[RMDB]
RNA sequence: GGGAACGACUCGAGUAGAGUCGAAAACGCACCAAAUGCGAGGAUUUUAGUCAUUUCAAACCCUGUAAACAGUUUGGUCCCUAUUGCUGUGGAAACUUUGAAGAAAAUGGGUAAGUUCAAACCUGGACCAUGGGCCAUAGUUCGCUAUGGCCCAUGGAAAAGAAACAACAACAACAAC
Reactivity to DMS in 0.01 (KOAc 150mM, MgCl2 10mM, bicine 150mM(pH8.5), 24C), signal-to-noise 1, nucleotides 027 to 126: c110g020c130a080c110c110a000a080a300u000g010c020g030a120g010g020a060u010u010u000u000a030g010u000c020a090u000u000u000c050a060a050a070c040c020c040u000g010u010a140a100a060c050a040g000u000u000u010g040g030u010c020c030c020u010a090u020u000g000c030u010g000u000g050g000a060a060a110c120u010u000u000g000a060a100g000a060a040a060a040u000g000g000g000u000a010a100g000u020u000c060a060a110a130c130c010u000g000g020a300
Overview
The record gives the reactivity of an RNA of 177 nucleotides to DMS. The data come from the RNA Mapping Database (RMDB), library OK2TST. The RNA was probed in 150 mM KOAc, 10 mM MgCl2 and 150 mM bicine (pH 8.5) at 24 C. Values cover nucleotides 27 to 126.